Conditions: 150 mM KOAc, 10 mM MgCl2 and 150 mM bicine (pH 8.5), 24 C. An RNA of 177 nucleotides, treated with DMS and 2A3 and read out base by base.

RNA sequence: GGGAACGACUCGAGUAGAGUCGAAAAUACAGAGAAAUCACGGUCGAGAUCAAAACUCAGAAGUCUGUCAGAUUCUCUCUCUCCGUCGUCUCAACCGUGUUUUUCUGUAUAAAGAGAUGUACUGGAUUAAAGUUAACUACUUCGGUAGUUAACUUUAAAAAGAAACAACAACAACAAC
Reactivity to DMS in 0.01 (KOAc 150mM, MgCl2 10mM, bicine 150mM(pH8.5), 24C), signal-to-noise 4, nucleotides 027 to 126: u000a000c010a000g010a010g000a000a020a020u020c000a000c010g000g000u000c050g000a040g000a020u020c170a100a120a110a080c070u010c060a120g000a110a090g020u010c030u010g020u020c080a080g010a090u000u020c070u000c050u010c040u010c020u000c030c060g010u010c230g000u000c010u000c010a040a010c000c000g010u000g000u000u000u000u030u000c020u000g000u000a010u000a030a080a100g010a110g000a070u010g010u010a080c040u010g000g020a290u030
Reactivity to 2A3 in 0.01 (KOAc 150mM, MgCl2 10mM, bicine 150mM(pH8.5), 24C), signal-to-noise 6, nucleotides 027 to 126: u010a000c000a000g010a000g030a020a000a030u250c020a000c000g020g010u000c020g000a000g000a020u100c090a040a100a060a090c080u060c080a050g030a140a010g070u040c080u120g140u090c040a030g010a140u180u020c020u000c000u000c000u010c000u030c070c030g110u130c050g020u000c010u000c000a010a010c000c000g000u000g010u000u000u000u000u000c000u010g000u000a000u010a010a010a000g050a000g000a020u110g020u130a070c060u060g070g020a120u080
Reactivities are given for positions 27 through 126.
For 2A3 the reverse transcriptase was SuperScript II with manganese.